[RMDB]
RNA sequence: GGGAACGACUCGAGUAGAGUCGAAAAUGUGCCACAACAGUAGCGUCGCGAGUACUCCCCCGUCCGCGAUCCUGGAGGCACCUCCUGCUCGUGGGGGAGUCGCCAGGAUGACGCGCCACUGGGCCAAUCAUACCUACGCAUUCGUGCGUAGGUAUGAAAAAGAAACAACAACAACAAC
Reactivity to DMS in 0.01 (KOAc 150mM, MgCl2 10mM, bicine 150mM(pH8.5), 24C), signal-to-noise 5, nucleotides 027 to 126: u010g020u000g020c010c030a070c090a120a300c040a040g000u000a040g010c030g010u000c020g000c020g000a140g020u000a070c060u000c040c000c000c090c120g000u000c080c080g020c010g010a030u000c020c020u000g010g010a040g000g010c080a100c070c010u000c000c000u000g010c210u020c190g030u000g000g000g010g000g000a030g040u000c000g010c010c030a040g010g010a030u010g000a080c190g000c020g010c040c040a050c030u010g000g000g010c040c050a110a160